[RMDB]
RNA sequence: GGGAACGACUCGAGUAGAGUCGAAAAAUAUAUGUAAUCAUUGUCCAGAUUGAACAUACAGUUUGCACUCAUGAUUCACGUUAUAUAACUAUCAAUAUUAACAGUUCGUUUGAUGAUCAUAUUAUUUUUAUGUUUUAUUGAUAAUUGUAAAAACAUAGCUAUUCUUGUCAUUCGUGACAAGAAUAGCAAAAGAAACAACAACAACAAC
Reactivity to 2A3 in 0.01 (KOAc 150mM, MgCl2 10mM, bicine 150mM(pH8.5), 24C), signal-to-noise 2, nucleotides 027 to 156: a000u120a010u030a020u050g010u000a020a020u020c010a000u000u050g020u080c070c000a010g050a000u050u070g090a250a110c100a080u300a030c010a050g010u000u000u010g000c030a020c010u110c000a000u000g030a010u030u000c110a000c060g020u130u000a010u000a020u010a100a030c030u070a010u110c000a070a000u090a010u170u130a050a050c040a070g080u130u130c080g100u130u220u160g100a100u060g010a000u000c010a010u120a150u300u110a120u040u300u070u130u050a070u010g000u060u000u000u000a020u050u000g000a000u090a130a120u160u170g020u060a000a090a180a080a000c010a060u100a060